[RMDB]
RNA sequence: GGGAACGACUCGAGUAGAGUCGAAAAGCAAAACAAUAGGUGCUAAGUCUAAUAACCGCACCGAUUUCGCCCUCGCUGCCUGAUUAGGCCGAGCUGCGAAUCCGUCAGUCUAGAGUUGCUUCCACUCUAGGUCCUGGCGUCGCUUAGGGAGCCACUGCGGUUUUAUGAGGUUCGCCUCAUAAAACCGAAAAGAAACAACAACAACAAC
Reactivity to 2A3 in 0.01 (KOAc 150mM, MgCl2 10mM, bicine 150mM(pH8.5), 24C), signal-to-noise 1, nucleotides 027 to 156: g030c000a010a030a050a180c060a050a180u140a200g030g000u000g020c010u120a050a110g050u130c090u150a100a160u150a220a110c070c010g010c010a000c000c000g000a010u090u190u030c000g000c050c000c000u020c000g060c060u120g000c000c000u190g140a300u160u300a030g000g020c020c000g010a000g030c050u040g000c020g000a000a000u000c020c010g000u000c000a010g040u000c010u000a000g010a000g020u010u170g030c000u020u010c020c010a020c020u000c000u000a020g020g040u100c020c000u000g000g000c000g130u080c030g040c050u020u100a030g020g000g000a000g000c020c000a060c040u040g020
The record gives the reactivity of an RNA of 207 nucleotides to 2A3. The 2A3 profile rests on 767 reads. The RNA was probed in 150 mM KOAc, 10 mM MgCl2 and 150 mM bicine (pH 8.5) at 24 C. For 2A3 the reverse transcriptase was SuperScript II with manganese. It was measured as part of the RMDB library RSTRND. Reactivities are given for positions 27 through 156.